Chemical mapping of a 177-nucleotide RNA with DMS and 2A3.
RNA sequence: GGGAACGACUCGAGUAGAGUCGAAAAUAAUGCCGAUUACGCGUACGAUCGCGCGCGUAAUGCGCGCAUUAAUUAUAUACGUAAUAUCGAUGCUAUACGCGGCUAAUCGAUGCAUGCAUAUAUGCUAAACCAGGUCAAAUUUCGAUUUGACCUGGUUAAAAGAAACAACAACAACAAC
Reactivity to DMS in 0.01 (KOAc 150mM, MgCl2 10mM, bicine 150mM(pH8.5), 24C), signal-to-noise 3, nucleotides 027 to 126: u010a060a050u010g010c000c010g000a070u000u000a020c010g030c010g030u000a050c050g030a060u000c140g050c030g040c000g040c010g020u000a050a090u030g030c040g000c110g050c020a020u000u010a070a060u000u000a030u010a110u000a050c030g010u000a070a060u000a060u000c010g000a050u000g030c130u010a130u000a060c130g000c110g020g000c120u010a060a020u000c050g010a140u010g010c110a030u000g000c060a040u020a070u010a070u000g020c050u000a100
Reactivity to 2A3 in 0.01 (KOAc 150mM, MgCl2 10mM, bicine 150mM(pH8.5), 24C), signal-to-noise 1, nucleotides 027 to 126: u140a030a000u030g000c000c000g020a010u000u000a000c010g040c030g000u060a050c050g040a050u030c090g040c000g000c080g050c010g190u110a020a050u150g040c000g000c000g000c020a000u020u050a020a000u000u040a020u010a020u010a060c020g000u030a050a050u040a020u150c000g020a020u060g060c080u070a000u000a150c110g000c110g040g000c090u040a030a000u010c030g000a010u100g010c050a010u050g050c010a020u110a000u040a010u100g050c070u080a100

Background:
DMS adducts were read by reverse transcription with MarathonRT. The reactions ran in a buffer of 150 mM KOAc, 10 mM MgCl2 and 150 mM bicine (pH 8.5), at 24 C. For 2A3, 1,070 sequencing reads were counted. For 2A3 the reverse transcriptase was SuperScript II with manganese.